[RMDB]
RNA sequence: GGGAACGACUCGAGUAGAGUCGAAAAACGACUAGCCGUUACGACGGCUAGUCGAAAGCACAAUUUACACGGAUUCACCCUGACUUAUAUUUUAAUGCCGGUGUUAUCCGCCAGUGUUGUGCCAGAACGAUUUGGAGCAAUUCGUUGCUCCAAAUCGAAAAGAAACAACAACAACAAC
Reactivity to DMS in 0.01 (KOAc 150mM, MgCl2 10mM, bicine 150mM(pH8.5), 24C), signal-to-noise 2, nucleotides 027 to 126: a090c010g000a020c000u000a010g020c000c000g050u000u000a090c100g000a120c000g000g000c000u000a000g000u050c000g030a000a010a180g000c030a000c000a020a010u010u030u000a060c130a220c020g000g000a020u010u010c020a000c000c020c110u010g040a210c300u020u000a050u000a200u010u040u000u000a010a000u010g020c190c300g000g000u020g000u040u000a030u000c000c000g030c000c030a130g060u040g000u000u020g000u010g000c000c100a120g000a050a200
Reactivity to 2A3 in 0.01 (KOAc 150mM, MgCl2 10mM, bicine 150mM(pH8.5), 24C), signal-to-noise 4, nucleotides 027 to 126: a010c010g000a000c000u000a000g000c000c000g020u030u030a060c300g020a000c010g080g010c000u000a000g000u010c000g010a010a000a000g010c000a010c010a010a000u010u060u170a050c070a030c010g020g000a010u040u050c030a020c000c030c020u070g100a090c030u210u040a120u120a180u300u250u090u100a100a080u130g070c100c000g000g000u000g060u080u020a050u000c000c000g010c020c030a080g020u000g000u000u000g000u000g000c010c000a030g030a120a010
The record gives the reactivity of an RNA of 177 nucleotides to DMS and 2A3. The RNA was probed in 150 mM KOAc, 10 mM MgCl2 and 150 mM bicine (pH 8.5) at 24 C. It was measured as part of the RMDB libraries RFM100 and RFMREP. Values cover nucleotides 27 to 126. As a SHAPE reagent, 2A3 marks flexible, mostly unpaired nucleotides at the ribose 2'-OH.